[RMDB]
RNA sequence: GGGAACGACUCGAGUAGAGUCGAAAAAGGCUUCGGGGACGGGUGAGCCGGCGGCCAGCGGCGAAGCCCAAUAUCUGUCGGGAGUUCCCGGGGUAGUGGCGACGGGAUGGGUGCGAAAUCUAGCGGUUCAAUAUACUAGGUUCGCCUAGUAUAUUGAAAAAGAAACAACAACAACAAC
Reactivity to 2A3 in 0.01 (KOAc 150mM, MgCl2 10mM, bicine 150mM(pH8.5), 24C), signal-to-noise 1, nucleotides 027 to 126: a000g030g000c000u000u000c010g040g000g020g000a000c050g010g040g000u080g030a020g000c000c000g070g000c000g060g070c040c060a040g020c000g020g000c040g050a030a010g000c000c000c030a070a030u160a020u060c040u060g180u120c060g030g000g000a040g020u080u030c030c020c020g020g010g000g010u090a060g050u030g040g080c120g020a090c060g000g000g000a050u060g020g010g000u040g040c000g000a070a050a080u060c030u060a060g090c040g040g040u000
Reactivity to DMS in 0.01 (KOAc 150mM, MgCl2 10mM, bicine 150mM(pH8.5), 24C), signal-to-noise 2, nucleotides 027 to 126: a100g000g000c020u010u000c030g020g010g020g010a060c140g020g000g020u000g000a300g010c000c010g000g070c070g020g020c060c040a100g010c030g000g000c000g000a100a170g000c010c000c010a100a080u010a060u000c040u000g000u010c070g000g000g000a270g010u000u000c000c000c000g000g000g000g030u010a060g010u000g000g000c100g010a110c130g000g000g000a080u010g000g000g000u010g000c070g010a050a040a060u010c070u010a090g010c080g000g000u000